[RMDB]
RNA sequence: GGGAACGACUCGAGUAGAGUCGAAAAGUGAUUCCUCCCAGACACAUCGCUGGCUGGAGAGGGGACGUCGCUCGAGACGUCUGCAGGGUGAGGCAGCCUCGCUGGCAAGGGGCCUGAUGGGCAGCCCUCUCCUACACGUGUUCGCACGUGUAGGAGAAAAAGAAACAACAACAACAAC
Reactivity to 2A3 in 0.01 (KOAc 150mM, MgCl2 10mM, bicine 150mM(pH8.5), 24C), signal-to-noise 1, nucleotides 027 to 126: g140u090g060a170u050u060c000c000u000c000c000c000a000g020a010c020a010c000a250u240c190g040c210u010g010g000c020u000g000g020a280g050a030g100g000g000g000a020c030g090u040c030g010c020u050c050g070a100g000a030c030g090u040c010u010g050c030a030g060g000g000u080g030a100g030g000c020a020g000c000c000u040c050g050c040u060g020g000c040a080a130g050g020g090g030c020c010u050g030a160u090g020g020g000c000a010g000c000c010c050
Reactivity to DMS in 0.01 (KOAc 150mM, MgCl2 10mM, bicine 150mM(pH8.5), 24C), signal-to-noise 2, nucleotides 027 to 126: g020u000g020a130u010u030c040c000u010c000c000c000a030g020a050c020a020c030a190u030c250g010c140u000g020g010c000u020g000g020a140g000a020g010g000g000g000a020c080g000u000c010g000c080u000c100g000a160g010a040c000g000u000c000u010g010c070a130g010g020g000u010g000a080g000g020c050a090g020c010c000u000c130g000c030u000g020g030c050a140a130g020g000g010g010c030c050u000g010a080u010g010g010g000c050a130g010c040c000c030